An RNA of 177 nucleotides, treated with 2A3 and read out base by base. Values cover nucleotides 27 to 126. Source: RMDB library OK1LIB, as collected in RNAgym. For 2A3 the reverse transcriptase was SuperScript II with manganese.
[RMDB]
RNA sequence: GGGAACGACUCGAGUAGAGUCGAAAAAUUCUGAUUCCAGACACUUAUACUGCAAGAAUCAGCUUUGCAGGCAAUGAAAACUACAGCUCAUCUAAUGGAAAUGCAAGUGUUACCGUUAAAAGGAUAGAGCGAGUGAUGAGUUCGCUCAUCACUCGCUAAAAGAAACAACAACAACAAC
Reactivity to 2A3 in 0.01 (KOAc 150mM, MgCl2 10mM, bicine 150mM(pH8.5), 24C), signal-to-noise 1, nucleotides 027 to 126: a020u030u100c000u040g000a000u070u060c000c000a000g050a030c020a060c050u130u070a000u300a130c000u000g000c000a120a090g000a000a090u140c000a000g060c000u000u000u050g000c000a000g070g000c000a000a300u130g060a100a000a000a000c040u030a060c060a120g040c000u010c000a000u020c090u090a080a110u060g080g000a050a000a140u030g010c000a000a130g000u040g070u120u000a010c060c060g000u080u120a000a190a170a000g120g000a070u210a000g060